About this RNA
An RNA of 177 nucleotides, treated with 2A3 and DMS and read out base by base. Source: RMDB library M2PK90, as collected in RNAgym. Conditions: 150 mM KOAc, 10 mM MgCl2 and 150 mM bicine (pH 8.5), 24 C. For DMS the reverse transcriptase was MarathonRT.

RNA sequence: GGGAACGACUCGAGUAGAGUCGAAAACAUCAGGAGGACCUUCCGCGCACUUCCAAGCAGGUGCUUUCCUUCCAAGCGCACUUCCAAUCUACUCGAGAGGAGGAGGAGGAGGAGGAUUCCCACAAAAGUCUAAGAUCGUAUUCGUACGAUCUUAGACAAAAGAAACAACAACAACAAC
Reactivity to 2A3 in 0.01 (KOAc 150mM, MgCl2 10mM, bicine 150mM(pH8.5), 24C), signal-to-noise 3, nucleotides 027 to 126: c000a050u160c050a030g040g020a020g030g040a060c020c020u070u080c070c060g010c010g020c030a030c010u070u000c000c040a100a030g000c050a030g120g000u040g020c010u050u060u050c020c000u060u060c020c010a060a020g060c030g020c060a040c040u050u010c010c010a010a080u000c010u070a060c040u040c050g020a040g000a040g040g020a030g010g020a030g010g050a040g020g010a040g020g030a010g000g030a090u030u010c020c060c010a030c020a020a090a010a020
Reactivity to DMS in 0.01 (KOAc 150mM, MgCl2 10mM, bicine 150mM(pH8.5), 24C), signal-to-noise 3, nucleotides 027 to 126: c070a100u010c090a050g010g000a080g010g010a120c140c050u000u000c050c070g010c110g030c030a080c020u000u000c020c050a080a110g020c140a080g010g020u000g000c040u000u000u000c040c000u000u000c040c050a050a100g020c110g000c060a120c020u000u000c020c030a150a200u000c000u010a030c050u000c030g010a020g010a230g010g010a080g030g010a070g000g000a110g000g000a110g000g000a090g010g010a170u000u000c000c000c000a130c250a050a050a070a120